The record gives the reactivity of an RNA of 177 nucleotides to 2A3. Conditions: 150 mM KOAc, 10 mM MgCl2 and 150 mM bicine (pH 8.5), 24 C.
[RMDB]
RNA sequence: GGGAACGACUCGAGUAGAGUCGAAAAGAAGAAUGCUGGAAUUCAGAUCGGUCAAUGCAGUGGCCUUCAACCUGCUAGUGACCCUUAGGAUUGACAAGGCGAUUGGCCCUGGGAAGAUCAUCGACAACUAUCUUGCGGGCUUCGGCCCGCAAGAUAGAAAAGAAACAACAACAACAAC
Reactivity to 2A3 in 0.01 (KOAc 150mM, MgCl2 10mM, bicine 150mM(pH8.5), 24C), signal-to-noise 1, nucleotides 027 to 126: g060a000a010g050a150a000u100g000c040u050g000g150a040a040u180u030c000a000g010a150u040c040g000g000u000c000a060a000u150g150c050a000g000u060g050g120c030c000u100u000c000a040a040c000c000u000g000c000u000a000g170u090g120a100c000c000c000u000u100a140g050g000a150u040u170g000a180c240a050a050g180g100c270g080a030u090u110g000g040c000c000c000u120g030g000g000a030a000g000a130u050c000a000u000c100g000a000c030a080a000